[RMDB]
RNA sequence: GGGAACGACUCGAGUAGAGUCGAAAAACGGCAACAACGUCAACACUGACGUUGGCGCCAACGGUUGGGCCCCCACGGUCUCAACUGGCCUAGGUGAUGGUCCCGUCUCAUGCACUCCGCCGACUCCGGACAUGUACCGUUUCGACGGUACAUGUCCAAAAGAAACAACAACAACAAC
Reactivity to 2A3 in 0.01 (KOAc 150mM, MgCl2 10mM, bicine 150mM(pH8.5), 24C), signal-to-noise 1, nucleotides 027 to 126: a000c040g030g000c000a020a010c000a000a000c020g000u000c000a100a080c160a090c300u080g000a000c000g000u000u010g000g000c010g000c000c010a000a000c000g020g010u020u020g030g000g040c000c030c040c000c020a090c160g000g050u000c000u030c020a050a000c030u030g050g000c000c020u050a040g030g040u050g050a040u070g010g000u070c000c030c030g050u040c020u040c010a070u120g000c000a010c040u000c030c010g080c000c040g060a060c040u000c030c080
Reactivity to DMS in 0.01 (KOAc 150mM, MgCl2 10mM, bicine 150mM(pH8.5), 24C), signal-to-noise 2, nucleotides 027 to 126: a130c220g000g000c050a080a240c000a020a020c000g020u010c020a030a130c300a140c290u000g020a010c000g000u010u000g000g040c300g020c010c000a060a070c100g010g000u010u000g000g000g000c020c020c050c110c160a070c260g000g010u010c000u000c070a000a040c030u020g000g010c020c010u000a060g030g010u010g010a050u000g020g000u000c010c010c010g010u000c050u000c020a080u000g000c020a070c040u000c060c020g000c060c030g020a100c080u010c040c090